[RMDB]
Overview:
Structure probing data (2A3 and DMS) for a 177-nucleotide construct. For DMS the reverse transcriptase was MarathonRT.
RNA sequence: GGGAACGACUCGAGUAGAGUCGAAAAAGCUGGUACGCCAGCAGGGCCUAAUGAUGAGAAUAUGUAAUUUAUCUCACAACGGUCUGCUGAGAAUUCUUUGAUGUGACAUAUAUUCUCUGAAGCCCAAUGUGGCUCUAGAUUUCGAUCUAGAGCCACAAAAAGAAACAACAACAACAAC
Reactivity to 2A3 in 0.01 (KOAc 150mM, MgCl2 10mM, bicine 150mM(pH8.5), 24C), signal-to-noise 3, nucleotides 027 to 126: a030g010c000u010g000g000u020a020c230g070c010c000a000g000c000a000g000g010g010c000c030u070a160a100u070g060a140u020g010a010g000a000a080u030a000u040g050u100a050a160u150u300u120a160u010c100u040c020a050c060a050a050c090g120g100u020c070u000g030c090u070g030a040g030a040a100u080u100c080u250u210u040g140a150u120g130u110g080a000c100a000u110a000u000a040u070u000c000u000c010u000g010a010a020g000c000c010c000a040a030
Reactivity to DMS in 0.01 (KOAc 150mM, MgCl2 10mM, bicine 150mM(pH8.5), 24C), signal-to-noise 1, nucleotides 027 to 126: a090g020c000u010g000g020u000a140c160g050c020c000a000g020c000a000g010g040g000c000c160u020a140a290u000g000a200u000g070a050g000a010a000u000a000u010g000u000a140a020u040u000u020a070u000c010u000c050a000c020a080a100c060g000g000u020c040u000g000c110u000g000a030g020a040a010u000u000c190u000u000u000g060a020u000g000u020g000a130c190a090u030a090u010a030u020u000c000u030c000u000g010a260a110g000c000c000c000a120a100
Source: RMDB library RFM100, as collected in RNAgym. The reactions ran in a buffer of 150 mM KOAc, 10 mM MgCl2 and 150 mM bicine (pH 8.5), at 24 C. For 2A3 the reverse transcriptase was SuperScript II with manganese. Values cover nucleotides 27 to 126. 2A3 is a SHAPE reagent: it acylates the 2'-hydroxyl of flexible nucleotides of all four kinds.